About this RNA
Structure probing data (2A3 and DMS) for a 177-nucleotide construct. DMS adducts were read by reverse transcription with MarathonRT. Reactivities are given for positions 27 through 126. Conditions: 150 mM KOAc, 10 mM MgCl2 and 150 mM bicine (pH 8.5), 24 C. The data come from the RNA Mapping Database (RMDB), library OK2TRN.
[RMDB]
RNA sequence: GGGAACGACUCGAGUAGAGUCGAAAAUUCUAAGACAUUUUAUGUCCUUCCGCUCCGCGGGAAGUUGUCAUUUUGGGAGGCGGGAACGACUAAGGCUGGCUACCCUUAUAAUUAUAACACAACUGCCCUAAUUGAGUGUAUUCGUACACUCAAUUAGAAAAGAAACAACAACAACAAC
Reactivity to 2A3 in 0.01 (KOAc 150mM, MgCl2 10mM, bicine 150mM(pH8.5), 24C), signal-to-noise 5, nucleotides 027 to 126: u040u020c020u070a120a020g070a020c030a040u130u130u110u270a090u160g010u020c000c020u020u010c010c010g040c050u080c060c120g060c040g060g030g020a020a000g060u130u120g090u100c070a080u030u110u160u120g080g000g020a060g020g120c060g000g030g010a020a050c030g030a020c060u030a030a040g020g010c010u010g000g000c000u030a060c020c010c000u040u050a100u050a130a050u150u140a130u070a270a020c050a000c010a120a040c030u040g010c000c000
Reactivity to DMS in 0.01 (KOAc 150mM, MgCl2 10mM, bicine 150mM(pH8.5), 24C), signal-to-noise 6, nucleotides 027 to 126: u010u000c030u000a100a120g010a060c050a040u010u010u000u010a050u010g010u000c020c050u000u000c030c010g020c040u010c090c090g030c090g020g000g000a040a050g010u000u010g010u020c070a160u000u000u000u000g000g010g010a130g010g020c060g000g000g000a050a050c090g000a070c110u010a060a060g010g010c030u010g020g000c030u000a080c090c010c020u010u010a050u010a080a080u010u010a080u010a080a110c150a060c110a050a060c070u000g000c070c040